[RMDB]
RNA sequence: GGGAACGACUCGAGUAGAGUCGAAAAACCUUUGUGUGUGGUCGCUACAUGACAUGAAUCCGCUGCCCAUUGGGCAGGUCUGGAUUCAACAGCAUGUAAAAGUCCACACACUCUGGUAAAACAAGUUAAACGAAAGUUCGCUUUCGUUUAACUUGAACAUCAGGGACGACUUCGGUCGUCCCUGAUGAAAAGAAACAACAACAACAAC
Reactivity to 2A3 in 0.01 (KOAc 150mM, MgCl2 10mM, bicine 150mM(pH8.5), 24C), signal-to-noise 1, nucleotides 027 to 156: a000c010c000u000u020u000g010u000g000u000g000u000g000g000u030c040g040c130u010a000c000a000u020g090a080c040a070u020g010a030a000u000c000c010g010c000u000g010c030c050c160a300u140u300g000g000g000c030a000g000g020u050c100u300g000g000a020u020u010c010a020a000c000a010g040c010a000u000g000u000a010a010a150a120g020u000c010c000a000c000a000c000a000c000u000c000u000g000g020u000a060a060a000a060c000a000a000g000u000u000a000a000a000c000g020a020a000a000g000u070u120c210g050c190u010u000u000c000g000u000u000u000a000a000c000u000u000g000a000a000
Chemical mapping of a 207-nucleotide RNA with 2A3.
It was measured as part of the RMDB library RNAMAK.
The reactions ran in a buffer of 150 mM KOAc, 10 mM MgCl2 and 150 mM bicine (pH 8.5), at 24 C.